[RMDB]
RNA sequence: GGGAACGACUCGAGUAGAGUCGAAAACUAUCCCGGGGUCAAGUAUGAUGAUUGGAGCCGAAUGGCCUAGAAAAUGCAUCCGUUCCGUCCUCGGAGAUGAUUGAGUAGCUGUCCCGGUCGGUGUCUCACCAUCGAAUGAGUUCGCUCAUUCGAUGGUAAAAGAAACAACAACAACAAC
Reactivity to DMS in 0.01 (KOAc 150mM, MgCl2 10mM, bicine 150mM(pH8.5), 24C), signal-to-noise 2, nucleotides 027 to 126: c080u000a120u010c020c000c020g030g000g000g010u000c060a110a140g020u000a050u000g000a060u010g000a100u000u000g000g000a170g030c020c000g000a080a080u010g050g000c020c070u020a100g010a090a070a100a080u000g030c000a020u000c020c060g000u000u010c090c060g020u010c010c050u000c010g000g000a120g020a020u020g000a080u000u010g010a090g020u020a130g000c040u000g010u000c010c000c010g000g010u010c030g000g010u010g020u000c010u000c050
Reactivity to 2A3 in 0.01 (KOAc 150mM, MgCl2 10mM, bicine 150mM(pH8.5), 24C), signal-to-noise 2, nucleotides 027 to 126: c030u040a070u020c000c000c000g000g010g000g020u030c030a040a040g070u120a130u140g030a020u030g000a020u070u150g070g020a060g020c050c010g070a230a210u290g020g000c020c020u020a040g110a070a180a030a030u170g030c020a010u000c040c020g060u070u000c030c010g010u000c000c020u030c030g050g000a180g050a040u000g040a070u050u050g040a040g070u060a010g020c050u010g010u070c000c030c000g040g000u030c020g020g070u050g070u020c020u000c050

The data come from the RNA Mapping Database (RMDB), library RFMREP. The record gives the reactivity of an RNA of 177 nucleotides to DMS and 2A3. For DMS the reverse transcriptase was MarathonRT. High DMS reactivity at an A or C suggests that its Watson-Crick edge is free.